The data come from the RNA Mapping Database (RMDB), library OK1LIB. An RNA of 177 nucleotides, treated with DMS and 2A3 and read out base by base. 2A3 is a SHAPE reagent: it acylates the 2'-hydroxyl of flexible nucleotides of all four kinds. 2A3 adducts were read by reverse transcription with SuperScript II with manganese. For 2A3, 656 sequencing reads were counted. The RNA was probed in 150 mM KOAc, 10 mM MgCl2 and 150 mM bicine (pH 8.5) at 24 C. For DMS the reverse transcriptase was MarathonRT.
RNA sequence: GGGAACGACUCGAGUAGAGUCGAAAACUGCGCGCGUGGCAGGUGGGUUGGUGAUGGUCCGGAUUUCUUAUAUUUAGAGAUGAGUUUUGCUGGGUUAGGGUGGUCGUGGAUAGCUUGGGCGCGCGUGCUAUAUAAAUUUUUUCGAAAAUUUAUAUAGAAAAGAAACAACAACAACAAC
Reactivity to DMS in 0.01 (KOAc 150mM, MgCl2 10mM, bicine 150mM(pH8.5), 24C), signal-to-noise 2, nucleotides 027 to 126: c050u020g030c010g000c020g000c020g030u010g010g020c070a070g000g020u020g000g000g000u030u010g000g000u040g010a080u030g000g010u010c030c040g040g000a060u000u000u010c020u000u010a120u050a090u050u020u030a090g000a090g020a020u010g000a090g020u030u010u010u030g010c060u010g010g000g000u010u040a080g010g010g000u010g010g000u010c050g000u010g000g000a070u020a080g010c070u000u010g010g020g000c030g000c010g010c010g020u000g000
Reactivity to 2A3 in 0.01 (KOAc 150mM, MgCl2 10mM, bicine 150mM(pH8.5), 24C), signal-to-noise 2, nucleotides 027 to 126: c000u010g000c000g020c020g000c010g020u030g080g030c030a020g000g070u050g010g030g010u080u100g000g010u120g020a090u030g020g040u060c030c000g010g000a040u040u080u000c010u080u030a100u030a180u260u260u270a090g050a000g010a020u020g050a060g070u050u060u160u120g030c060u050g060g000g030u110u050a060g030g060g030u040g030g030u030c020g020u060g010g000a060u070a110g000c040u020u010g060g000g000c010g000c000g000c000g000u000g000